RNA sequence: GGGAACGACUCGAGUAGAGUCGAAAAGAUAUGGAAUGACUUUGUCGCUUAUCUCACUACCCACCUACGAGCCUCGGAAACGAGGUAACGUAGAGGUGAGAGUAAGCGACAAAGUCAUUCCUAAGUCCCUGUACUGCUAGUUCGCUAGCAGUACAGGAAAAGAAACAACAACAACAAC
Reactivity to DMS in 0.01 (KOAc 150mM, MgCl2 10mM, bicine 150mM(pH8.5), 24C), signal-to-noise 1, nucleotides 027 to 126: g000a060u010a300u000g000g000a000a030u000g000a030c000u000u000u020g020u000c010g010c010u010u000a010u000c000u030c020a020c000u000a120c080c100c190a300c130c000u000a000c020g010a300g010c000c030u020c000g020g000a070a070a210c010g010a020g010g020u010a040a040c040g030u000a000g000a160g020g030u000g000a030g000a080g000u000a030a000g020c020g000a000c000a000a020a000g010u000c000a000u010u000c000c000u000a040a090g000u000c010